[RMDB]
RNA sequence: GGGAACGACUCGAGUAGAGUCGAAAAGCGAUUGGUUCGCCAAUCGCAAAAAGCGUACUACUAAGAGGUACCCUCCGACGAUCAUUUCCCAAAUAGGAAAUGAUUAGGAGGUACUACCCACCUUAGUAUCGCAAAAACACAAGCUUCGGCUUGUGAAGCUCCCUAUUGUGUUCGCACAAUAGGGAGCAAAAGAAACAACAACAACAAC
Reactivity to 2A3 in 0.01 (KOAc 150mM, MgCl2 10mM, bicine 150mM(pH8.5), 24C), signal-to-noise 2, nucleotides 027 to 156: g000c000g000a000u000u000g040g000u050u180c170g090c070c000a000a020u000c000g000c010a060a050a000a000a000g040c030g020u090a090c030u010a000c000u000a060a000g050a030g060g000u020a040c120c000c000u000c000c000g190a190c200g020a030u000c000a000u000u010u010c030c000c000a250a240a090u300a070g000g000a000a000a000u010g000a020u000u020a020g000g000a000g000g000u000a020c000u000a000c010c000c000a060c000c010u000u010a000g020u010a030u290c010g000c060a040a080a000a110a030c000a000c000a000a030g000c020u040u120c170g110g000c000u050u000g010u020g000a000a000